The record gives the reactivity of an RNA of 170 nucleotides to 2A3 and DMS. The RNA was probed in 150 mM KOAc, 10 mM MgCl2 and 150 mM bicine (pH 8.5) at 24 C. It was measured as part of the RMDB library 15KLIB. DMS adducts were read by reverse transcription with MarathonRT. The DMS profile rests on 5,736 reads.
RNA sequence: GGGAACGACUCGAGUAGAGUCGAAAAAGGACGUCCUCCCUGUCUCCUCGGUUCUUCUUCGAUCCGGACCGGCUCAUCUCGGCAAGAGGCGGCAGUCCUCAGUGCUCUUACUCUUUCCUAUAAAGAGAUCUCCGUGCCUUCGGGCACGGAAAAAGAAACAACAACAACAAC
Reactivity to 2A3 in 0.01 (KOAc 150mM, MgCl2 10mM, bicine 150mM(pH8.5), 24C), signal-to-noise 3, nucleotides 027 to 129: a000g030g060a020c000g060u070c000c000u050c000c000c000u030g040u000c000u000c020c010u000c000g020g000u000u070c000u080u040c030u100u110c050g100a090u030c000c000g020g000a030c000c000g020g000c000u000c060a090u010c010u010c000g020g020c020a010a040g000a040g030g000c000g020g060c050a040g030u020c000c010u040c030a010g030u060g030c010u000c000u100u070a110c000u000c000u040u000u030c040c040u060a120u120a170a070a000g040a000g010a010u020c010
Reactivity to DMS in 0.01 (KOAc 150mM, MgCl2 10mM, bicine 150mM(pH8.5), 24C), signal-to-noise 1, nucleotides 027 to 129: a090g000g000a000c070g000u050c000c000u000c050c020c030u040g000u050c030u010c000c000u030c000g050g030u040u000c050u060u000c170u020u000c090g030a150u010c050c040g080g010a000c130c040g000g060c020u000c090a040u020c090u020c050g030g010c110a100a040g030a090g070g020c090g000g060c300a030g110u060c050c000u050c100a120g020u010g030c070u010c070u030u030a200c020u000c010u000u000u000c040c070u070a090u040a000a040a020g020a020g000a050u030c120